[RMDB]
RNA sequence: GGGAACGACUCGAGUAGAGUCGAAAAAUACAAUUCUUGUAGUACAUCAUAUAUAGCACUGAAUUACCAAAUUCCUGAUAAAUAAGGAAAGGGUGGAAUAAAAGUAUCUCAUCAGGUAUAUUUAAAUGACAUAAUCUAUGUUCGCAUAGAUUAUGUCAAAAGAAACAACAACAACAAC
Reactivity to DMS in 0.01 (KOAc 150mM, MgCl2 10mM, bicine 150mM(pH8.5), 24C), signal-to-noise 3, nucleotides 027 to 126: a110u020a050c080a070a080u020u000c070u010u000g000u000a150g020u010a070c070a080u000c080a060u000a100u000a090u000a110g030c040a030c090u000g010a050a040u000u000a050c050c020a080a120a170u000u010c000c000u010g010a150u010a060a090a070u010a110a060g010g010a030a040a120g000g020g020u000g000g010a050a050u000a040a050a080a150g010u000a040u010c020u010c070a070u010c040a060g000g010u000a030u000a070u000u010u010a030a090a160u000
Reactivity to 2A3 in 0.01 (KOAc 150mM, MgCl2 10mM, bicine 150mM(pH8.5), 24C), signal-to-noise 3, nucleotides 027 to 126: a000u110a030c010a010a070u060u060c000u050u100g040u050a040g030u010a030c010a070u050c030a000u090a030u020a010u040a160g070c010a010c130u040g030a050a050u080u040a050c000c010a000a050a200u020u030c010c010u000g020a050u070a260a140a050u160a100a000g010g000a020a030a020g060g030g000u020g030g090a030a020u130a100a170a010a000g070u020a050u040c050u010c010a070u030c020a010g040g030u030a070u000a030u120u270u060a030a090a060u040

The record gives the reactivity of an RNA of 177 nucleotides to DMS and 2A3. 2A3 adducts were read by reverse transcription with SuperScript II with manganese. Source: RMDB library RFMREP, as collected in RNAgym. The RNA was probed in 150 mM KOAc, 10 mM MgCl2 and 150 mM bicine (pH 8.5) at 24 C. For 2A3, 2,063 sequencing reads were counted.